[RMDB]
Annotation: Chemical mapping of a 177-nucleotide RNA with DMS and 2A3. For 2A3 the reverse transcriptase was SuperScript II with manganese. For DMS the reverse transcriptase was MarathonRT. The RNA was probed in 150 mM KOAc, 10 mM MgCl2 and 150 mM bicine (pH 8.5) at 24 C.
RNA sequence: GGGAACGACUCGAGUAGAGUCGAAAACGGAAGAAGAAUAAAACUGCCUCGAGGCAGCGCACAGACUGGUUGGAUCGCUCGACGAUCAUGGCAGCAUCAGCGACCAAAGCAAUCCGUUUGCUAUUGACGAGCCUAAACAAUUCGUUGUUUAGGCUCGAAAAGAAACAACAACAACAAC
Reactivity to DMS in 0.01 (KOAc 150mM, MgCl2 10mM, bicine 150mM(pH8.5), 24C), signal-to-noise 3, nucleotides 027 to 126: c040g000g020a030a070g050a140a130g040a050a020u030a060a070a090a260c010u000g020c000c000u060c220g000a200g030g020c000a010g040c060g020c040a040c200a050g000a120c030u000g000g030u000u040g000g010a010u000c020g070c030u030c140g020a050c030g000a010u030c040a070u010g010g000c060a040g010c070a040u020c070a120g010c030g020a020c150c090a050a080a050g000c070a140a050u000c030c030g000u010u010u010g000c010u010a080u010u020g010a280
Reactivity to 2A3 in 0.01 (KOAc 150mM, MgCl2 10mM, bicine 150mM(pH8.5), 24C), signal-to-noise 5, nucleotides 027 to 126: c040g050g050a030a010g070a060a020g040a070a160u210a110a120a010a040c020u030g020c010c030u190c120g060a240g000g020c010a020g000c000g020c020a060c010a040g040a050c030u030g020g240u080u100g060g010a040u030c020g000c030u130c120g220a250c020g000a040u030c010a070u090g040g000c010a010g030c000a020u060c020a010g030c010g030a070c020c080a060a030a000g040c000a000a060u020c030c020g010u020u000u070g030c030u090a080u110u140g050a050